[RMDB]
RNA sequence: GGGAACGACUCGAGUAGAGUCGAAAAGUUGGAUCGCCGGAGAUCCUUCUCGAGCAGUCGCCUUUUCUUCCUUUCUUCUACCCACUGUUCGAGGAUCUCCUCCCUCUCCUUCGAGGACGGGUUCGCGUUAGGCCGCACUUCGGUGCGGCCAAAAGAAACAACAACAACAAC
Reactivity to 2A3 in 0.01 (KOAc 150mM, MgCl2 10mM, bicine 150mM(pH8.5), 24C), signal-to-noise 2, nucleotides 027 to 129: g080u080u090g020g040a110u100c060g060c070c000g030g000a000g000a000u000c010c000u070u000c030u000c000g000a000g000c000a000g000u140c030g170c000c080u140u160u070u090c000u040u040c020c090u050u190u140c120u140u000c050u200a100c000c030c000a040c020u040g020u040u000c020g000a010g000g010a000u000c000u000c030c000u030c000c020c020u040c000u020c000c030u050u080c010g000a040g080g050a000c020g010g040g010u000u140c050g030c020g020u020u030a040
Reactivity to DMS in 0.01 (KOAc 150mM, MgCl2 10mM, bicine 150mM(pH8.5), 24C), signal-to-noise 4, nucleotides 027 to 129: g110u000u030g050g000a150u000c130g050c170c100g020g050a070g000a020u000c030c170u000u220c170u000c030g030a100g030c050a000g000u010c200g020c000c060u120u090u000u040c120u070u000c110c000u010u070u050c040u060u010c120u050a220c000c000c000a110c000u020g040u010u060c080g000a010g000g000a000u030c000u080c010c040u050c080c070c060u010c080u020c030c040u020u090c070g070a100g010g010a110c190g050g090g020u000u000c000g010c160g040u120u000a160
An RNA of 170 nucleotides, treated with 2A3 and DMS and read out base by base.
In probing experiments dimethyl sulfate is read out at A N1 and C N3, which are open when not base-paired.
For DMS the reverse transcriptase was MarathonRT.